[RMDB]
RNA sequence: GGGAACGACUCGAGUAGAGUCGAAAAGCUGCACGUGCGCGCGGCCGUCAACGCCGAGACCCGCACGAUCAGCGGCGUGGGCGUGCCCUACGGCGAGACCAUCACGAUCUGGGGAGAGCGCGAGCGAUAUACCACGGCCAUUCGUGGCCGUGGUAUAAAAAGAAACAACAACAACAAC
Reactivity to 2A3 in 0.01 (KOAc 150mM, MgCl2 10mM, bicine 150mM(pH8.5), 24C), signal-to-noise 1, nucleotides 027 to 126: g020c040u030g040c080a030c090g060u070g000c000g030c020g010c000g050g030c000c000g100u160c070a070a010c040g000c000c000g030a050g050a050c030c020c020g000c000a080c030g040a150u090c040a010g060c010g060g000c000g040u050g030g070g020c070g010u100g000c000c020c010u050a020c030g020g050c030g000a050g010a050c070c050a050u100c030a010c030g070a160u020c020u070g020g040g010g000a130g000a030g000c100g000c040g070a060g000c050g030a000
Reactivity to DMS in 0.01 (KOAc 150mM, MgCl2 10mM, bicine 150mM(pH8.5), 24C), signal-to-noise 2, nucleotides 027 to 126: g060c010u000g030c120a080c050g020u000g000c000g050c180g000c040g010g030c020c050g000u000c180a110a110c290g010c010c000g010a100g000a130c090c130c040g000c040a090c050g010a090u010c060a070g000c010g020g030c010g000u000g000g000g020c010g000u000g000c050c020c040u000a080c090g010g000c040g030a140g010a100c050c080a060u000c070a080c060g020a070u000c050u020g010g010g010g010a110g010a160g010c040g010c040g000a070g010c050g000a100

An RNA of 177 nucleotides, treated with 2A3 and DMS and read out base by base. 2A3 adducts were read by reverse transcription with SuperScript II with manganese. The reactions ran in a buffer of 150 mM KOAc, 10 mM MgCl2 and 150 mM bicine (pH 8.5), at 24 C. The DMS profile rests on 1,657 reads.